Description
The record gives the reactivity of an RNA of 207 nucleotides to 2A3.

[RMDB]
RNA sequence: GGGAACGACUCGAGUAGAGUCGAAAAGGGGUUCUUAUAACCAGUGUGAAGGAUGUUAGUACAUUGACACCUCUGUUGUCAAACCUGUGGUCGCAUGUGUUUGGCUUCGAAUAUCCUAGGAAUUCAGGAGACAGGGGAAUCAUAGCAACUGCAGUCACACAUACUCCCGGUUCGCCGGGAGUAUGUGAAAAGAAACAACAACAACAAC
Reactivity to 2A3 in 0.01 (KOAc 150mM, MgCl2 10mM, bicine 150mM(pH8.5), 24C), signal-to-noise 1, nucleotides 027 to 156: g070g010g020g030u070u090c060u210u150a090u060a130a050c060c000a050g000u000g010u000g050a090a030g040g000a030u000g020u030u070a100g020u060a050c010a090u060u060g070a030c000a030c030c000u030c050u060g000u010u050g030u000c050a000a050a010c000c000u050g000u020g050g140u150c140g000c070a020u080g030u020g090u010u000u040g010g000c000u050u050c030g000a030a020u030a050u090c030c030u050a010g030g120a120a140u100u020c040a060g000g000a060g040a050c020a000g110g000g000g000a000a000u010c070a010u060a070g060c000a000a060c010u050g000c080a020g020u020c020a000